[RMDB]
RNA sequence: GGGAACGACUCGAGUAGAGUCGAAAAAACAGUGUAGUGAUUAUGCGAUAUUGCUAUGUUACAUGCAAUAAAAAACCCCGCCUUAGCGGGGUUCGUCAACGACAACGAGAAGCCAAUGAAACAGAUUCAUCGAAAAGUGUUAGUAGCAGGAUGAAUAGCUUAUACUCUCUUUCGAGAGAGUAUAAGCAAAAGAAACAACAACAACAAC
Reactivity to 2A3 in 0.01 (KOAc 150mM, MgCl2 10mM, bicine 150mM(pH8.5), 24C), signal-to-noise 2, nucleotides 027 to 156: a000a000c070a030g000u060g050u080a020g010u000g110a090u060u140a050u220g070c060g060a060u010a020u080u040g030c000u010a050u150g070u140u180a070c020a050u090g000c020a000a080u100a120a060a010a000a000a010c020c010c020c000g060c040c130u070u070a040g000c000g010g000g060g020u020u030c020g000u000c010a050a050c010g070a000c000a070a050c050g000a000g040a120a000g050c050c030a060a050u080g040a140a090a020c030a030g110a070u060u070c010a030u030c050g100a080a060a040a070g040u040g040u170u070a020g010u000a000g050c000a010g040g070a020u040g010a010a030u050a080
Reactivity to DMS in 0.01 (KOAc 150mM, MgCl2 10mM, bicine 150mM(pH8.5), 24C), signal-to-noise 1, nucleotides 027 to 156: a060a110c060a100g090u010g000u020a090g020u000g000a080u000u020a070u020g020c030g020a080u000a010u000u020g020c000u020a070u000g010u000u020a040c110a070u020g060c020a250a050u000a010a090a050a060a060a050c010c000c000c010g040c020c190u000u020a080g110c000g030g010g030g060u000u000c000g040u000c040a050a080c090g030a080c040a050a060c050g020a230g000a080a070g020c040c070a030a090u010g020a110a020a040c050a110g000a060u000u000c020a020u000c010g000a060a050a060a080g000u000g020u000u000a100g020u030a070g020c030a050g010g000a050u020g010a040a050u000a170